[RMDB]
RNA sequence: GGGAACGACUCGAGUAGAGUCGAAAAGAAAGAAAGAAAGAACUUGCUUGUGCUAAGGUGCAUCUAGUGCAGAUAGUUCCGCUGCGUAAAUGCUACUGCUCUAUGUGCUCCUUUACCCACAAGAGAAUAUCCAUUACCACUUCGGUGGUAAUGGAUAAAAAGAAACAACAACAACAAC
Reactivity to DMS in 0.01 (KOAc 150mM, MgCl2 10mM, bicine 150mM(pH8.5), 24C), signal-to-noise 4, nucleotides 027 to 126: g010a080a050a080g000a080a090a080g010a070a100a080g000a090a140c060u000u010g030c010u000u000g010u000g020c160u010a030a020g020g010u010g000c000a010u000c180u000a000g000u010g000c010a000g000a100u010a030g020u000u010c050c090g000c090u010g020c100g020u020a060a140a100u010g000c000u000a020c010u000g000c000u000c000u000a010u000g010u000g000c010u000c010c010u000u000u000a040c240c300c000a010c020a010a010g000a080g010a090a130
Reactivity to 2A3 in 0.01 (KOAc 150mM, MgCl2 10mM, bicine 150mM(pH8.5), 24C), signal-to-noise 6, nucleotides 027 to 126: g110a000a070a010g110a020a060a010g080a010a130a000g060a050a040c040u080u120g010c010u010u010g020u010g010c020u020a000a010g000g000u010g010c000a000u000c010u020a010g000u000g000c010a010g050a300u020a000g050u110u080c070c030g070c120u190g020c050g070u150a090a090a080u220g000c010u000a010c000u000g000c000u000c000u010a000u020g010u000g010c000u010c000c000u000u000u030a030c010c010c000a000c010a000a020g030a010g070a070a020